[RMDB]
RNA sequence: GGGAACGACUCGAGUAGAGUCGAAAAUAAAAUAAGAGGGACAAGAAUCUGACCUGCACCUCCUCGUCGUGUCCCUCGGAAACGUGCUCAACGCGCGGCCGACGCAGGCAGAAAAUAAAGAAAAAAAUCUAAAUGUACAGUUCGCUGUACAUUUAGAAAAAGAAACAACAACAACAAC
Reactivity to DMS in 0.01 (KOAc 150mM, MgCl2 10mM, bicine 150mM(pH8.5), 24C), signal-to-noise 1, nucleotides 027 to 126: u000a070a130a120a060u000a070a150g010a020g030g030g000a010c010a090a080g000a040a040u000c010u010g000a030c000c000u030g000c060a070c060c100u000c030c020u000c050g000u010c030g040u000g000u000c000c020c000u010c010g050g000a090a070a110c000g030u000g000c000u000c270a110a080c190g000c000g030c000g020g000c150c000g020a010c020g020c000a020g000g020c020a010g000a180a040a060a080u020a020a050a240g030a000a000a030a070a110a120a070